An RNA of 207 nucleotides, treated with DMS and 2A3 and read out base by base. It was measured as part of the RMDB library M2RFPK. For 2A3 the reverse transcriptase was SuperScript II with manganese. The RNA was probed in 150 mM KOAc, 10 mM MgCl2 and 150 mM bicine (pH 8.5) at 24 C.
[RMDB]
RNA sequence: GGGAACGACUCGAGUAGAGUCGAAAAAUACAUUCCUGUGCCGGCAAUACAGUGUGUAUGGAGGUCUCAAUGGCUCGGAAGUGCCAGCAAACGGGCGUAGAUAUUAGCAGACGUAUGGGCGUAAGACAAAAGAGAAUGAUGUUCGCAUCAUUCUCAACUUAGAAAAGAAGUUCGCUUCUUUUCUAAGAAAAGAAACAACAACAACAAC
Reactivity to DMS in 0.01 (KOAc 150mM, MgCl2 10mM, bicine 150mM(pH8.5), 24C), signal-to-noise 2, nucleotides 027 to 156: a100u000a050c010a090u000u000c300c000u000g000u000g010c040c020g070g000c050a080a080u000a080c040a050g030u000g030u000g020u010a050u010g020g020a130g030g030u000c030u000c020a060a100u000g020g000c000u000c060g020g000a110a120g000u010g000c020c020a060g030c050a040a070a100c070g000g010g020c030g040u000a040g010a110u000a030u010u000a030g010c040a080g010a120c050g030u000a060u000g010g010g010c030g030u000a040a060g020a120c050a040a050a080a160g010a030g020a030a000u000g020a030u000g010u000u010c300g050c020a020u000c010a020u000u000c000u010c000a000a030
Reactivity to 2A3 in 0.01 (KOAc 150mM, MgCl2 10mM, bicine 150mM(pH8.5), 24C), signal-to-noise 3, nucleotides 027 to 156: a000u120a020c030a050u080u050c010c010u020g040u030g030c040c050g030g050c040a040a040u070a100c050a050g030u010g020u010g010u100a070u050g060g030a050g030g080u020c030u030c070a070a120u050g050g010c010u020c030g010g050a110a030g030u030g040c020c010a030g000c020a060a090a020c050g000g020g000c010g000u030a040g040a050u050a060u080u140a040g010c040a010g010a070c030g050u070a050u060g020g030g000c010g010u030a030a030g060a020c070a050a090a000a010g000a000g010a020a000u000g010a000u000g020u020u050c150g020c050a000u000c000a000u000u010c000u000c000a000a000